Source information: An RNA of 207 nucleotides, treated with DMS and 2A3 and read out base by base. It was measured as part of the RMDB library RNAMAK. The DMS profile rests on 3,926 reads.

[RMDB]
RNA sequence: GGGAACGACUCGAGUAGAGUCGAAAACGGACCAUUCGUGGUCCGAAAAAGAUAUGGAGCACCUACCCACCUCGCAAUGAGGCAAUGACGUCGGAAACGAUAAGACAGCCUCAGCGAGAGGGUGCUCCUAAGUCAAAAAGAGAUCUUCGGAUCUCAAAUAAUAAAGCUUAUUCGUAAGCUUUAUUAUAAAAGAAACAACAACAACAAC
Reactivity to DMS in 0.01 (KOAc 150mM, MgCl2 10mM, bicine 150mM(pH8.5), 24C), signal-to-noise 2, nucleotides 027 to 156: c020g010g000a040c010c000a060u000u000c300g050u010g030g020u000c000c000g020a000a040a090a110a060g010a170u000a300u000g000g020a050g050c000a020c000c010u000a090c020c020c030a300c100c000u000c000g060c050a180a220u010g000a000g000g010c000a100a050u010g030a140c140g000u000c020g000g010a170a140a220c020g000a010u000a040a130g020a250c030a120g040c000c000u000c000a130g020c050g000a010g000a110g010g000g010u000g000c020u000c020c000u010a000a030g020u000c050a070a070a140a120a140g010a010g000a010u000c000u000u010c260g040g020a030u000c000u000c000a000a020
Reactivity to 2A3 in 0.01 (KOAc 150mM, MgCl2 10mM, bicine 150mM(pH8.5), 24C), signal-to-noise 4, nucleotides 027 to 156: c010g010g000a000c010c010a040u060u100c300g090u060g020g000u020c000c010g050a020a000a000a010a010g100a050u210a060u120g000g000a000g010c000a000c000c010u240a300c060c010c000a020c000c000u000c000g020c040a070a300u060g000a000g000g000c020a040a060u060g020a010c040g000u010c000g020g010a050a120a070c010g020a010u030a090a050g040a020c000a040g300c000c000u010c010a010g000c000g010a000g000a000g000g010g000u000g000c010u000c000c000u000a000a000g020u020c010a000a020a000a050a010g010a000g020a000u040c010u050u080c240g130g000a000u000c000u020c010a050a010

Conditions: 150 mM KOAc, 10 mM MgCl2 and 150 mM bicine (pH 8.5), 24 C.